[RMDB]
RNA sequence: GGGAACGACUCGAGUAGAGUCGAAAAGAAUGUGGAGCCGUCAGCACCUCGUCCUUACCUUUUUUGGCGGCUUUUACAUAUUUCGAUAUGUAUUAUGCUGGACGACAAGCUGGCCAGCACAAUUAGAGGGUUGGCUGGAGUUCGCUUUAGCCAACCCAAAAGAAACAACAACAACAAC
Reactivity to 2A3 in 0.01 (KOAc 150mM, MgCl2 10mM, bicine 150mM(pH8.5), 24C), signal-to-noise 9, nucleotides 027 to 126: g070a020a080u140g010u040g040g030a030g050c020c000g010u010c000a010g020c010a030c010c020u020c020g060u060c010c010u060u170a160c030c030u150u150u050u010u070u060g020g000c020g010g000c000u000u010u000u000a010c000a000u010a010u020u090u080c130g090a010u000a010u020g020u000a020u060u020a050u210g000c020u020g000g010a040c030g040a050c080a070a070g070c060u090g040g000c000c000a020g030c010a010c020a030a060u080u100a050g040a090
Reactivity to DMS in 0.01 (KOAc 150mM, MgCl2 10mM, bicine 150mM(pH8.5), 24C), signal-to-noise 4, nucleotides 027 to 126: g010a040a050u020g020u010g000g030a080g010c020c120g010u010c010a000g010c050a080c150c200u010c020g010u010c020c010u000u020a180c060c050u000u010u030u020u010u020g020g020c120g000g000c010u000u000u000u000a000c000a000u000a020u000u010u060c110g010a040u010a010u010g020u010a010u000u010a030u010g000c000u000g000g000a030c020g010a150c210a080a180g020c140u030g000g010c000c010a040g000c010a050c190a020a070u020u020a080g000a300
An RNA of 177 nucleotides, treated with 2A3 and DMS and read out base by base. For DMS, 15,901 sequencing reads were counted. For 2A3 the reverse transcriptase was SuperScript II with manganese. The RNA was probed in 150 mM KOAc, 10 mM MgCl2 and 150 mM bicine (pH 8.5) at 24 C. Reactivities are given for positions 27 through 126.